This 207-nucleotide RNA was probed chemically with 2A3. 2A3 adducts were read by reverse transcription with SuperScript II with manganese. The data come from the RNA Mapping Database (RMDB), library OK3TST. Conditions: 150 mM KOAc, 10 mM MgCl2 and 150 mM bicine (pH 8.5), 24 C.
[RMDB]
RNA sequence: GGGAACGACUCGAGUAGAGUCGAAAAUUCAUCGCCAUAAUUAAACGCCUGCUGUGAAUGUCACUUCGCCACUUGAAGCUAAUGCAGCCUCAAAUGUAUAUCCUUCGUUCGAUUCGCCAGUUUCAGUGUAUGAGUUCAUGGCGAAAUCACCUGUAACCAACUUAGGCCUUUUCGAAGGCCUAAGUUGAAAAGAAACAACAACAACAAC
Reactivity to 2A3 in 0.01 (KOAc 150mM, MgCl2 10mM, bicine 150mM(pH8.5), 24C), signal-to-noise 1, nucleotides 027 to 156: u090u050c030a010u010c020g070c030c020a030u040a220a100u260u070a110a190a000c070g000c020c000u010g000c010u000g050u040g190a090a010u070g030u050c030a010c020u030u090c010g070c000c020a050c000u000u110g050a010a000g000c000u000a050a000u170g090c020a000g020c000c000u020c040a140a180a040u090g050u020a040u010a030u210c010c010u040u090c030g050u030u110c000g020a050u010u000c000g000c000c000a000g010u010u030u000c010a020g000u100g090u210a110u050g020a050g070u060u020c030a080u130g000g000c010g000a020a000a000u030c000a000c000c020u080g050u190a080a010c160